[RMDB]
RNA sequence: GGGAACGACUCGAGUAGAGUCGAAAAUCAUUCAUGAAGAGGAUAACGGAUAAAGAGAAGAAAGAAGCACUAGCAUUAGAGGAGGAUCUUGUUGAAAUUCAAGGGAAGAAGGAAGAAGCAACAAUCAUCUCUUAGGCAUUUUCGAAUGCCUAAGAGAAAAAGAAACAACAACAACAAC
Reactivity to DMS in 0.01 (KOAc 150mM, MgCl2 10mM, bicine 150mM(pH8.5), 24C), signal-to-noise 3, nucleotides 027 to 126: u000c070a090u010u000c080a090u000g030a100a050g020a050g020g000a060u010a030a100c090g010g000a040u010a060a120a130g000a080g010a050a070g000a040a070a060g000a080a070g030c050a070c090u020a060g010c120a100u010u000a070g010a100g020g010a030g020g010a050u010c070u000u000g020u010u000g020a040a070a070u010u000c050a020a070g010g000g000a040a040g000a060a060g000g010a040a010g010a040a060g030c090a030a020c130a050a090u010c150a100
Reactivity to 2A3 in 0.01 (KOAc 150mM, MgCl2 10mM, bicine 150mM(pH8.5), 24C), signal-to-noise 1, nucleotides 027 to 126: u070c000a040u040u090c050a070u190g090a080a030g030a000g010g000a010u040a090a010c030g030g000a010u110a080a140a030g050a010g030a120a000g060a080a060a010g020a050a000g060c030a040c030u130a020g020c000a030u050u130a040g010a020g030g000a020g000g010a020u010c030u030u060g030u000u030g060a070a090a120u040u050c050a020a000g040g010g040a020a040g050a020a010g130g000a000a060g050a070a010g120c040a010a040c000a020a040u250c010a030

Source information: Conditions: 150 mM KOAc, 10 mM MgCl2 and 150 mM bicine (pH 8.5), 24 C. An RNA of 177 nucleotides, treated with DMS and 2A3 and read out base by base. For 2A3 the reverse transcriptase was SuperScript II with manganese. For DMS the reverse transcriptase was MarathonRT. The data come from the RNA Mapping Database (RMDB), library OK2TST.